Chemical mapping of a 207-nucleotide RNA with 2A3 and DMS. The data come from the RNA Mapping Database (RMDB), library RNAMAK. The reactions ran in a buffer of 150 mM KOAc, 10 mM MgCl2 and 150 mM bicine (pH 8.5), at 24 C. Values cover nucleotides 27 to 156. In probing experiments dimethyl sulfate is read out at A N1 and C N3, which are open when not base-paired.
[RMDB]
RNA sequence: GGGAACGACUCGAGUAGAGUCGAAAACGAACUGUUCGCAGUUCGAACUAGCGUACUACGAGGUUUCUUGGAUUUAGAGUACGAAUGCGUCCCAAAUAGGACGCACUAUACUCUUGUCAGAUGCCUCGUAUCGCAUUUGGCCCGGUUCGCCGGGCAAGAUUACGUCCCAAUUCGUUGGGACGUAAUCAAAAGAAACAACAACAACAAC
Reactivity to 2A3 in 0.01 (KOAc 150mM, MgCl2 10mM, bicine 150mM(pH8.5), 24C), signal-to-noise 5, nucleotides 027 to 156: c010g020a000a000c000u020g040u120u100c280g000c160a000g000u000u000c000g020a050a040c070u080a090g010c010g040u140a090c070u010a010c030g010a010g020g020u000u040u050c040u140u200g160g010a040u180u300u170a020g000a000g020u020a010c160g110a270a200u010g000c000g000u020c010c020c020a130a200a070u270a070g000g000a000c000g030c020a000c000u000a000u000a030c000u000c010u000u000g010u010c000a010g010a010u010g000c000c010u000c000g000u000a010u000c000g000c000a000u100u070u150g140g010c000c000c030g000g010u080u030c250g030c050c000g000g010g010c000a010a000
Reactivity to DMS in 0.01 (KOAc 150mM, MgCl2 10mM, bicine 150mM(pH8.5), 24C), signal-to-noise 2, nucleotides 027 to 156: c010g000a020a000c030u000g030u000u010c300g030c000a030g010u010u000c000g030a090a140c050u000a090g030c000g040u010a030c150u000a010c000g030a090g010g020u010u000u000c020u020u000g020g010a050u000u020u010a010g030a020g060u000a010c050g000a050a030u000g000c000g000u000c010c010c000a020a180a230u010a070g020g000a040c030g030c040a000c010u000a060u000a020c000u000c000u000u000g010u000c000a060g000a050u000g000c020c000u010c020g000u000a010u000c020g000c010a260u010u000u010g020g020c000c000c010g010g000u000u000c300g000c010c000g030g010g000c000a000a020